[RMDB]
RNA sequence: GGGAACGACUCGAGUAGAGUCGAAAAGAUAUGGACGAGAGCAACAGCUACACGGGUCGGAAACGACCUGUAGACAUGCUCGAGUCCUAAGUCAAAAGGUUCGAGCGUCUUCGGACGCUCGAACCAACGAUAGUGUACACUUCGGUGUACACUAUCGAAAAGAAACAACAACAACAAC
Reactivity to 2A3 in 0.01 (KOAc 150mM, MgCl2 10mM, bicine 150mM(pH8.5), 24C), signal-to-noise 2, nucleotides 027 to 126: g000a000u050a010u070g000g000a010c020g010a010g000a000g050c000a010a250c090a250g100c050u030a010c080a040c190g120g020g040u000c000g000g000a020a010a010c000g030a000c010c010u000g000u000a010g030a060c050a120u040g020c000u000c000g010a020g000u000c000c000u000a020a000g000u020c010a050a040a080a160g040g010u000u000c030g020a000g000c030g010u070c050u150u190c300g130g000a000c000g030c000u000c020g010a000a000c000c000a000a000
Reactivity to DMS in 0.01 (KOAc 150mM, MgCl2 10mM, bicine 150mM(pH8.5), 24C), signal-to-noise 3, nucleotides 027 to 126: g030a030u000a220u010g000g010a020c010g020a300g000a020g000c000a010a170c300a130g020c030u000a030c060a050c140g010g000g000u010c000g020g000a090a040a120c020g000a010c000c000u000g000u000a020g020a170c050a200u000g000c000u000c020g010a300g000u020c000c010u000a000a080g010u010c020a070a090a140a110g020g020u000u000c000g000a030g030c020g020u010c000u000u020c220g000g010a010c000g000c000u000c000g000a000a000c000c010a010a010